[RMDB]
RNA sequence: GGGAACGACUCGAGUAGAGUCGAAAAGUUACACGCUUCGGCGUGUAACAAAUACUCAUACGGUCGCGGAAACGAGAGGACACUCUAGGAGGCAUCCAUGCAAAACCCAUUGCUUCGGCAAUGGGAACACUGAACCUAUGUUCGCAUAGGUUCAGUGAAAAGAAACAACAACAACAAC
Reactivity to 2A3 in 0.01 (KOAc 150mM, MgCl2 10mM, bicine 150mM(pH8.5), 24C), signal-to-noise 3, nucleotides 027 to 126: g010u000u010a010c000a000c000g020c000u050u050c150g110g010c010g000u000g000u020a000a000c000a000a000a000u030a000c000u010c020a030u040a130c050g050g030u060c020g030c030g090g040a060a100a080c050g010a040g000a020g070g030a050c040a020c060u070c020u050a080g010g070a000g020g000c000a040u010c060c000a010u110g050c030a030a050a110a210c010c000c000a000u010u000g020c000u010u040c180g070g000c000a000a000u000g000g000g030a010a000
Reactivity to DMS in 0.01 (KOAc 150mM, MgCl2 10mM, bicine 150mM(pH8.5), 24C), signal-to-noise 3, nucleotides 027 to 126: g000u000u000a000c000a000c010g010c000u000u010c190g020g010c020g020u000g010u000a010a000c000a020a080a070u000a090c010u000c020a070u000a090c130g010g010u000c030g030c090g010g010a080a080a100c070g010a080g010a060g000g000a080c170a080c040u010c040u000a090g010g000a070g000g010c060a040u000c040c070a060u000g000c160a070a030a100a110c020c000c000a010u000u000g010c000u000u010c170g030g000c010a000a000u000g000g010g010a010a030
Background:
Structure probing data (2A3 and DMS) for a 177-nucleotide construct. The reactions ran in a buffer of 150 mM KOAc, 10 mM MgCl2 and 150 mM bicine (pH 8.5), at 24 C. Values cover nucleotides 27 to 126. 2A3 adducts were read by reverse transcription with SuperScript II with manganese.